[RMDB]
RNA sequence: GGGAACGACUCGAGUAGAGUCGAAAAGAUAUGGAAUAAGGACCCUCGCAACAGCAAGAUUCGGAAACGAAUCUUGACAUGCGACGGUCUUAUUCCUAAGUCAAACAUCGCUAGUUCGCUAGCGAUGCGACGAGGGAUUGUUCGCAAUCCCUCGUCGAAAAGAAACAACAACAACAAC
Reactivity to 2A3 in 0.01 (KOAc 150mM, MgCl2 10mM, bicine 150mM(pH8.5), 24C), signal-to-noise 1, nucleotides 027 to 126: g020a000u080a050u220g000g020a010a000u030a030a090g240g140a300c020c040c000u000c010g050c010a060a240c040a300g150c000a000a010g010a000u020u000c010g080g030a060a070a080c000g000a020a000u020c000u000u010g030a070c020a050u060g000c000g000a000c000g000g000u010c020u000u010a010u000u000c010c010u050a210a020g060u040c030a030a170a000c010a010u000c000g050c010u000a000g080u100u000c300g000c210u000a000g000c000g000a000u000g000
Reactivity to DMS in 0.01 (KOAc 150mM, MgCl2 10mM, bicine 150mM(pH8.5), 24C), signal-to-noise 1, nucleotides 027 to 126: g000a060u000a300u010g000g010a010a000u020a030a050g000g000a040c000c000c040u000c000g060c000a040a030c230a300g000c000a000a000g000a000u000u010c010g000g000a110a080a170c000g000a020a020u000c000u010u000g000a050c120a140u000g020c000g000a000c300g040g030u000c000u010u010a000u000u000c000c000u000a020a180g000u000c080a180a060a300c040a010u000c010g000c000u000a000g000u000u020c280g020c000u040a050g020c000g010a000u000g040
Description
The record gives the reactivity of an RNA of 177 nucleotides to 2A3 and DMS. For DMS, 724 sequencing reads were counted. The reactions ran in a buffer of 150 mM KOAc, 10 mM MgCl2 and 150 mM bicine (pH 8.5), at 24 C.